[RMDB]
Background
The data come from the RNA Mapping Database (RMDB), library OK1LIB. Chemical mapping of a 177-nucleotide RNA with 2A3 and DMS. For 2A3, 605 sequencing reads were counted. For 2A3 the reverse transcriptase was SuperScript II with manganese. For DMS the reverse transcriptase was MarathonRT. The RNA was probed in 150 mM KOAc, 10 mM MgCl2 and 150 mM bicine (pH 8.5) at 24 C.
RNA sequence: GGGAACGACUCGAGUAGAGUCGAAAACAAUGUGGCACACGUCAGUGUGUAUAGCCAUUAGAGAAUAUGAUGAAGAAGGGACAUGUAAGAAGAUCCCUUCAGUGAAGUUUGACUGCUGACGUCGAUCGAUCGGGGAUACUUUCGAGUAUCCCCGAUCAAAAGAAACAACAACAACAAC
Reactivity to 2A3 in 0.01 (KOAc 150mM, MgCl2 10mM, bicine 150mM(pH8.5), 24C), signal-to-noise 1, nucleotides 027 to 126: c070a000a120u230g040u050g160g000c000a010c000a000c160g000u080c000a040g000u010g000u010g000u220a040u000a120g020c010c000a020u000u170a050g050a000g030a000a200u250a090u270g080a040u020g070a000a070g010a000a000g070g000g000a060c000a030u160g010u140a040a140g050a000a000g000a090u000c000c000c000u000u000c000a010g010u000g030a050a020g050u140u050u070g070a020c010u020g000c090u010g000a000c000g000u010c020g000a030u170c000
Reactivity to DMS in 0.01 (KOAc 150mM, MgCl2 10mM, bicine 150mM(pH8.5), 24C), signal-to-noise 2, nucleotides 027 to 126: c110a020a200u000g020u000g000g020c010a110c200a020c000g070u050c050a080g030u020g000u060g010u010a030u040a020g000c010c010a020u010u000a050g000a180g010a070a110u030a090u030g000a060u000g000a110a080g000a020a010g020g000g000a020c100a160u030g000u020a140a100g000a190a120g000a180u020c000c000c020u000u000c010a070g010u050g000a030a150g000u000u000u000g060a030c180u000g020c140u000g000a010c050g020u000c160g000a110u000c170